[RMDB]
RNA sequence: GGGAACGACUCGAGUAGAGUCGAAAAAAAUGUCGCAGAUUGAGAAUAUGAUUAACCGUGGUGUCGAUGUCUUGGUUAUUAUUCCUUAUAACGGGCAAGUAUUAAGUAAUGUCAUCGCCGAAGCAAAAGUUGCUUGUAUAUUCGUAUACAAGCAACUAAAAGAAACAACAACAACAAC
Reactivity to 2A3 in 0.01 (KOAc 150mM, MgCl2 10mM, bicine 150mM(pH8.5), 24C), signal-to-noise 3, nucleotides 027 to 126: a000a000a010u100g020u030c040g000c050a030g100a160u070u090g000a020g030a120a050u130a080u130g080a120u100u070a040a020c030c030g020u030g030g010u050g060u090c040g050a060u040g010u000c000u050u030g040g040u010u020a020u050u020a040u070u070c010c000u050u140a090u030a130a030c030g030g040g000c030a050a010g060u040a060u150u100a080a080g100u040a080a040u110g020u030c010a010u030c040g000c030c030g040a020a010g020c040a030a080a200
Reactivity to DMS in 0.01 (KOAc 150mM, MgCl2 10mM, bicine 150mM(pH8.5), 24C), signal-to-noise 5, nucleotides 027 to 126: a060a050a060u010g000u010c050g010c040a060g000a140u010u000g000a100g010a090a070u010a060u000g010a090u010u010a090a090c070c040g010u000g010g010u010g000u000c060g020a060u000g010u000c030u010u000g010g010u000u010a030u000u010a080u000u000c020c020u000u000a100u020a080a090c140g010g010g000c090a060a060g000u000a050u010u010a030a060g000u000a040a030u010g010u000c040a050u000c060g010c030c030g010a060a080g020c140a050a050a070
The data come from the RNA Mapping Database (RMDB), library OK2TST. Chemical mapping of a 177-nucleotide RNA with 2A3 and DMS. The reactions ran in a buffer of 150 mM KOAc, 10 mM MgCl2 and 150 mM bicine (pH 8.5), at 24 C. For 2A3, 2,950 sequencing reads were counted.